An RNA of 207 nucleotides, treated with 2A3 and read out base by base. For 2A3 the reverse transcriptase was SuperScript II with manganese. The RNA was probed in 150 mM KOAc, 10 mM MgCl2 and 150 mM bicine (pH 8.5) at 24 C.
[RMDB]
RNA sequence: GGGAACGACUCGAGUAGAGUCGAAAAGAAAUUACGCUUCCUUUACACUUCUCAAACCGGGAUCAAGAGAAGCAAAGCAUCCCUCAUAUCCACGAUGGAGGGUGUCGUGGAGUAUACUGUACCAAAAAGAGCGAACACGGCUUCGGCCGUGUUCGAAGUCCGAUUUAAGGUUCGCCUUAAAUCGGACAAAAGAAACAACAACAACAAC
Reactivity to 2A3 in 0.01 (KOAc 150mM, MgCl2 10mM, bicine 150mM(pH8.5), 24C), signal-to-noise 2, nucleotides 027 to 156: g010a020a090a050u210u090a050c070g020c010u030u040c020c000u010u040u100a020c040a060c050u100u070c030u030c040a160a190a160c080c020g000g060g000a060u120c040a000a110g050a000g010a010a000g000c060a070a020a000g070c010a070u060c020c050c010u100c050a080u150a010u060c000c000a000c010g000a040u040g090g070a030g090g000g030u110g000u000c000g010u010g020g010a000g010u010a010u000a030c120u070g110u160a060c090c000a040a110a110a030a030g070a000g030c030g000a000a000c000a000c000g000g030c000u020u040c100g050g000c010c050g000u000g000u000u000c000g070a010a000